The record gives the reactivity of an RNA of 177 nucleotides to 2A3 and DMS. For 2A3 the reverse transcriptase was SuperScript II with manganese. Reactivities are given for positions 27 through 126. Source: RMDB library M2PK50, as collected in RNAgym.
RNA sequence: GGGAACGACUCGAGUAGAGUCGAAAACGACUUACCUUCGGGUAAGUCGACAUAGGUGAGUUGAUCGGAUAGCUGCCUAGGUGAGUUCAUCGGAUAGCUGCCACAUGUAACGGUUCGCCGUUACAAACGUUUAUUGAACUUUCGAGUUCAAUAAACGAAAAGAAACAACAACAACAAC
Reactivity to 2A3 in 0.01 (KOAc 150mM, MgCl2 10mM, bicine 150mM(pH8.5), 24C), signal-to-noise 6, nucleotides 027 to 126: c010g000a000c010u000u000a000c000c010u010u070c240g040g000g000u010a010a000g000u000c000g000a000c010a060u170a050g080g000u080g210a070g020u070u120g170a080u050c060g050g020a030u030a030g010c020u050g080c020c040u090a150g040g110u120g110a090g030u070u110c070a020u030c040g050g010a020u020a030g020c020u020g000c010c000a070c020a060u100g000u010a010a000c000g000g060u040u040c220g020c090c010g000u010u000a000c000a000a040a000
Reactivity to DMS in 0.01 (KOAc 150mM, MgCl2 10mM, bicine 150mM(pH8.5), 24C), signal-to-noise 7, nucleotides 027 to 126: c020g010a010c000u000u000a010c000c000u000u010c210g020g010g010u000a010a000g010u010c000g010a050c150a080u010a080g010g020u000g010a050g010u000u000g000a040u000c050g000g000a050u000a040g000c020u010g010c030c030u010a090g030g000u010g010a110g010u000u000c100a030u000c030g000g000a040u000a050g010c020u000g000c020c030a120c220a110u000g000u000a000a000c000g000g000u000u010c250g020c000c000g010u010u000a010c000a030a080a140